[RMDB]
Source information: This 207-nucleotide RNA was probed chemically with 2A3. For 2A3 the reverse transcriptase was SuperScript II with manganese.
RNA sequence: GGGAACGACUCGAGUAGAGUCGAAAACCUCGUUAAUCAAUGGGAAAAUCGUAACUGCAAACGACGAUACGUUCGCACUGGCAGCCUAAGGGCCGCCGUCCUCUGCCUAGUUCACUGACGGGCUAGUGUCGCAAGACCGGUAGCAAUACCGCCAGAGCUCUACCCAGUACUUCGGUACUGGGUAGAGAAAAGAAACAACAACAACAAC
Reactivity to 2A3 in 0.01 (KOAc 150mM, MgCl2 10mM, bicine 150mM(pH8.5), 24C), signal-to-noise 2, nucleotides 027 to 156: c000c000u020c030g050u000u180a100a070u210c090a060a150u190g140g000g080a000a040a040a090u120c050g030u050a050a120c050u070g030c090a070a090a070c030g050a000c030g100a210u020a130c020g090u040u010c010g000c000a050c060u050g020g000c030a000g000c030c010u040a180a220g080g030g030c000c010g000c020c010g000u000c000c000u010c020u020g000c000c030u040a040g040u010u050c090a110c300u300g170a160c160g000g000g000c000u000a010g040u030g040u140c040g010c050a030a020g000a040c000c060g010g010u000a040g020c010a060a040u010a080c030c030g040c010c010a030g000a020g040